[RMDB]
RNA sequence: GGGAACGACUCGAGUAGAGUCGAAAAGAUAUGGAGAUAAAAGUCUUCGAUAAGCUCGUAUCGGAAACGAUACCGAGCUUUUGACGAAGUCGCUAUCUCCUAAGUCAAAGUGGUCCUUCGGGACCACCUACGGUACUAUCUUCGGAUAGUACCGUAGAAAAGAAACAACAACAACAAC
Reactivity to 2A3 in 0.01 (KOAc 150mM, MgCl2 10mM, bicine 150mM(pH8.5), 24C), signal-to-noise 2, nucleotides 027 to 126: g040a010u090a070u190g000g000a010g010a000u040a070a290a050a130g030u010c000u030u010c020g070a110u010a130a010g020c010u010c000g010u000a010u000c000g000g020a080a080a060c020g000a000u010a020c130c060g020a000g030c010u020u020u000u040g040a020c000g000a020a000g030u030c030g000c130u030a010u040c000u000c020c010u030a130a030g050u040c070a090a090a150g010u010g000g010u030c010c000u030u050c300g070g020g000a000c000c000a000c010
Reactivity to DMS in 0.01 (KOAc 150mM, MgCl2 10mM, bicine 150mM(pH8.5), 24C), signal-to-noise 4, nucleotides 027 to 126: g000a030u010a300u010g000g030a000g000a020u000a010a120a210a170g000u010c000u000u000c000g000a120u010a040a010g010c010u000c000g020u000a000u000c000g000g000a120a080a180c000g000a010u000a010c090c100g010a000g020c000u010u000u000u000g010a300c100g000a020a000g010u000c040g020c300u000a010u000c010u000c000c000u010a020a120g010u000c040a050a130a140g020u000g000g000u010c000c000u000u010c270g020g010g000a000c000c000a000c010
An RNA of 177 nucleotides, treated with 2A3 and DMS and read out base by base.
The reactions ran in a buffer of 150 mM KOAc, 10 mM MgCl2 and 150 mM bicine (pH 8.5), at 24 C.
Source: RMDB library TTRDES, as collected in RNAgym.
For DMS the reverse transcriptase was MarathonRT.